[RMDB]
Conditions: 150 mM KOAc, 10 mM MgCl2 and 150 mM bicine (pH 8.5), 24 C. Structure probing data (2A3) for a 207-nucleotide construct. Values cover nucleotides 27 to 156.

RNA sequence: GGGAACGACUCGAGUAGAGUCGAAAAAAGCAACUUAGGAUUUUAGGCUCCCCGGUGCGUCUCGAACCGCGCCGGGCCAAACCCACAGGGGCUGGCGGUCCUGUGCGGUCAAAAUCUUUCCGCUGGAAUACCUAUCCCAGUUUCGACUGGGAUAGAAUCACCAUCUAUCUUUCGAGAUAGAUGGUGAAAAAGAAACAACAACAACAAC
Reactivity to 2A3 in 0.01 (KOAc 150mM, MgCl2 10mM, bicine 150mM(pH8.5), 24C), signal-to-noise 1, nucleotides 027 to 156: a000a000g020c060a030a060c100u090u080a120g140g020a100u110u040u010u080a030g030g020c010u070c030c000c000c010g000g000u000g000c010g030u000c080u100c170g120a050a050c000c060g010c030g010c000c030g000g000g000c020c030a010a010a010c000c010c010a010c000a000g040g000g000g000c000u020g000g000c010g000g000u010c000c000u000g000u000g000c270g020g030u060c030a000a070a090a030u090c070u160u160u010c010c000g010c020u020g010g080a110a080u170a130c000c000u000a000u000c000c000c000a000g010u000u030u260c260g050a030c000u000g000g000g000a000u000a000g000a000a000